[RMDB]
RNA sequence: GGGAACGACUCGAGUAGAGUCGAAAAUGUUACACUGCGGCUUUCUCAGGAUUGUCAUGGUGGAUGGCUAAAUUAUAACUUAAAUCCUCAUUCCGCUCAACUCUUCGAUUGUAGACGACUAUCAAUACAAUAGAGCCAGAUUCGUCUGGCUCUAUUGAAAAGAAACAACAACAACAAC
Reactivity to 2A3 in 0.01 (KOAc 150mM, MgCl2 10mM, bicine 150mM(pH8.5), 24C), signal-to-noise 5, nucleotides 027 to 126: u100g000u010u040a040c030a010c050u060g000c040g030g010c010u010u070u030c060u050c040a090g080g050a070u030u100g020u040c030a010u090g090g010u040g040g040a050u050g070g000c050u080a060a060a110u300u170a160u060a130a000c030u010u160a080a050a050u080c010c020u030c020a040u100u000c020c030g050c030u050c020a020a060c040u000c070u110u020c030g110a100u020u030g030u030a040g020a100c020g030a030c020u050a070u300c080a040a050u050a120
Reactivity to DMS in 0.01 (KOAc 150mM, MgCl2 10mM, bicine 150mM(pH8.5), 24C), signal-to-noise 5, nucleotides 027 to 126: u020g010u000u000a090c060a070c040u010g010c080g000g020c030u000u010u010c020u010c140a160g000g000a090u020u000g000u010c050a070u010g000g040u020g010g010a080u020g010g000c050u010a030a060a060u020u030a090u020a070a090c170u000u010a080a080a110u000c020c010u010c060a070u010u000c040c020g000c030u020c060a050a090c080u000c030u010u000c040g010a050u000u020g000u000a060g020a090c080g000a070c080u000a050u000c030a060a070u030a120
The data come from the RNA Mapping Database (RMDB), libraries RFM100 and RFMREP. Structure probing data (2A3 and DMS) for a 177-nucleotide construct. For 2A3 the reverse transcriptase was SuperScript II with manganese. Reactivities are rounded to 0.1 and cut off at 0 and 3. Reactivities are given for positions 27 through 126. Conditions: 150 mM KOAc, 10 mM MgCl2 and 150 mM bicine (pH 8.5), 24 C.